[RMDB]
RNA sequence: GGGAACGACUCGAGUAGAGUCGAAAAGAUUAUGUGGGAGAUGCGCCCUGUCGUGUCACUGGAAACAGAAUUGCGAGUCGCUCGCACUAGCGAUAUUGAUGUGUACUGUAGCGUACACUGUGCUACUUUAAGGUAUCAUGACGAUACCACGUCAAAACGACCUGCUAAAUUUCGAUUUAGCAGGUCGAAAAGAAACAACAACAACAAC
Reactivity to DMS in 0.01 (KOAc 150mM, MgCl2 10mM, bicine 150mM(pH8.5), 24C), signal-to-noise 1, nucleotides 027 to 156: g020a160u020u000a030u000g050u000g070g010g010a200g020a110u010g000c070g000c000c110c070u000g010u000c050g040u020g010u010c070a180c070u000g000g000a060a100a160c060a140g000a060a130u000u010g040c040g000a100g010u000c020g030c000u010c040g020c030a120c030u000a060g000c010g030a080u010a090u000u000g000a080u020g050u000g000u000a060c020u010g000u020a100g000c130g010u000a040c050a050c050u040g000u000g010c010u010a060c040u020u000u000a030a120g050g020u010a030u010c000a140u000g010a200c100g000a020u000a020c000c000a090c070g000u010c060a020a010a120a180
Reactivity to 2A3 in 0.01 (KOAc 150mM, MgCl2 10mM, bicine 150mM(pH8.5), 24C), signal-to-noise 4, nucleotides 027 to 156: g030a030u120u140a080u140g070u150g010g010g010a100g010a060u040g020c000g020c020c030c070u110g080u130c060g000u050g030u030c030a010c080u000g020g050a050a040a030c040a030g110a160a190u100u170g020c040g040a020g030u030c010g010c010u040c040g060c050a040c080u050a000g000c020g010a010u030a090u090u190g050a070u040g010u000g020u040a020c040u050g130u230a040g080c030g030u010a010c060a010c080u020g030u050g020c000u000a090c050u070u080u110a090a010g010g000u010a010u020c040a050u120g110a040c140g000a000u000a010c020c010a010c010g050u040c000a000a000a080a000